The record gives the reactivity of an RNA of 177 nucleotides to DMS and 2A3. It was measured as part of the RMDB library OK1LIB. For 2A3 the reverse transcriptase was SuperScript II with manganese. The reactions ran in a buffer of 150 mM KOAc, 10 mM MgCl2 and 150 mM bicine (pH 8.5), at 24 C.

RNA sequence: GGGAACGACUCGAGUAGAGUCGAAAAAGCUGCUGGACGCGCUGAUUGACAAGUAUCGCCAGCAGCUGCUCAGCACCGACUUUCGCGCCGGCUGCCCGAUCGCCGCGGUCUCGGUGGAGGCGGGCGACGGUGGAGCCACGUUCGCGUGGCUCCACCGAAAAGAAACAACAACAACAAC
Reactivity to DMS in 0.01 (KOAc 150mM, MgCl2 10mM, bicine 150mM(pH8.5), 24C), signal-to-noise 2, nucleotides 027 to 126: a040g000c000u000g050c000u000g000g040a130c050g000c300g000c020u040g010a140u000u010g000a100c300a110a040g000u030a010u000c030g000c010c000a000g010c000a000g000c000u000g010c050u000c060a060g000c100a050c060c000g020a090c090u000u000u000c060g000c060g020c040c040g000g000c030u020g000c000c050c020g050a110u000c030g000c040c000g000c020g010g000u000c000u000c030g000g030u020g010g000a000g000g000c000g020g030g000c020g000a010
Reactivity to 2A3 in 0.01 (KOAc 150mM, MgCl2 10mM, bicine 150mM(pH8.5), 24C), signal-to-noise 4, nucleotides 027 to 126: a000g000c010u000g000c000u000g000g010a070c020g060c000g000c030u040g060a240u220u210g090a060c090a140a020g050u040a090u300c000g000c010c000a000g010c000a010g000c000u000g000c020u020c020a010g030c020a060c030c000g060a090c070u160u260u080c090g000c040g020c050c000g000g020c020u030g010c000c000c000g040a070u030c000g000c040c020g300c070g250g010u010c020u000c010g210g010u140g200g060a010g020g010c000g000g020g000c000g000a000